[RMDB]
RNA sequence: GGGAACGACUCGAGUAGAGUCGAAAAAACCAUGUAUACUCACCAUAUAUAAGAGGGAGGAAUCUGGGGGAGAGGAUGUGGCUGCUUACACCCCUCCUUUGUAACAGUGAGGUUAGGGCGACACAUCACUGCGUGUAGCUUUCGAGCUACACGCAGUAAAAGAAACAACAACAACAAC
Reactivity to DMS in 0.01 (KOAc 150mM, MgCl2 10mM, bicine 150mM(pH8.5), 24C), signal-to-noise 1, nucleotides 027 to 126: a050a050c070c010a160u050g000u000a030u000a020c050u000c130a150c030c050a270u010a080u010a080u000a100a080g000a060g000g000g010a070g050g030a120a020u000c170u010g000g010g000g010g000a120g000a040g030g020a000u000g010u010g000g020c050u000g060c030u020u040a060c110a110c140c120c000c020u010c040c000u010u030u020g000u000a070a040c290a070g020u030g000a020g000g010u000u000a100g010g000g000c010g000a080c010a000c050a000u000c060

Notes: Structure probing data (DMS) for a 177-nucleotide construct. For DMS the reverse transcriptase was MarathonRT. The DMS profile rests on 779 reads. The RNA was probed in 150 mM KOAc, 10 mM MgCl2 and 150 mM bicine (pH 8.5) at 24 C. Values cover nucleotides 27 to 126.